[RMDB]
RNA sequence: GGGAACGACUCGAGUAGAGUCGAAAAGAUAUGGAAUACCCGGAGCAACAGCCAUACGGAUUCGGAAACGAAUUUAUGGACAUGCUCCGGGUAUUCCUAAGUCAAAACCGAAUGUUCGCAUUCGGAACGGUAUUUUAGGGUUCGCCCUAAAAUACCGAAAAGAAACAACAACAACAAC
Reactivity to DMS in 0.01 (KOAc 150mM, MgCl2 10mM, bicine 150mM(pH8.5), 24C), signal-to-noise 1, nucleotides 027 to 126: g010a030u010a030u010g010g000a020a000u000a000c000c000c050g050g020a010g040c010a070a100c250a070g000c020c010a000u010a030c300g000g000a020u020u000c000g010g000a010a030a010c000g000a030a000u000u000u000a010u000g020g000a010c050a300u030g020c010u000c010c000g000g000g000u000a000u000u000c000c000u000a000a060g000u000c000a140a100a120a160c010c010g000a070a020u000g000u000u020c250g020c030a010u000u010c000g000g000a070a140